Chemical mapping of a 177-nucleotide RNA with DMS and 2A3. It was measured as part of the RMDB libraries RFM100 and RFMREP. Reactivities are given for positions 27 through 126. The reactions ran in a buffer of 150 mM KOAc, 10 mM MgCl2 and 150 mM bicine (pH 8.5), at 24 C.
[RMDB]
RNA sequence: GGGAACGACUCGAGUAGAGUCGAAAACGUUUCUUGAGCUUCCCGGGGAUGAGCGUCUGGGAGAGCUGAUUCUGCAGACCGGCUAGGAGCCGCAGGGCGUUCUCCGGGGCGCGGCCCGAGACCGUCGAAAAUCGUAAAAUUUCGAUUUUACGAUUUUAAAAGAAACAACAACAACAAC
Reactivity to DMS in 0.01 (KOAc 150mM, MgCl2 10mM, bicine 150mM(pH8.5), 24C), signal-to-noise 6, nucleotides 027 to 126: c160g010u000u000u000c000u000u000g010a140g010c080u010u000c010c010c000g010g000g010g010a100u030g010a150g000c020g010u000c010u010g000g010g010a010g000a020g010c020u020g010a110u020u010c010u010g010c020a120g000a150c100c060g000g030c140u030a140g010g010a130g010c050c030g010c020a030g000g010g000c030g000u000u000c010u000c000c000g010g000g000g010c020g020c020g000g000c000c000c010g010a050g010a060c280c060g010u010c060g010
Reactivity to 2A3 in 0.01 (KOAc 150mM, MgCl2 10mM, bicine 150mM(pH8.5), 24C), signal-to-noise 9, nucleotides 027 to 126: c040g000u010u030u020c010u030u080g040a030g020c020u050u030c000c010c020g020g000g000g010a300u240g050a040g040c010g010u010c010u110g120g000g010a030g000a000g000c030u060g100a300u050u030c010u040g010c010a070g070a260c050c040g030g040c070u140a130g090g150a070g110c030c020g000c020a010g010g010g000c010g010u020u000c010u000c000c000g010g000g010g000c010g000c000g010g000c000c000c000g000a010g010a020c040c040g090u110c030g030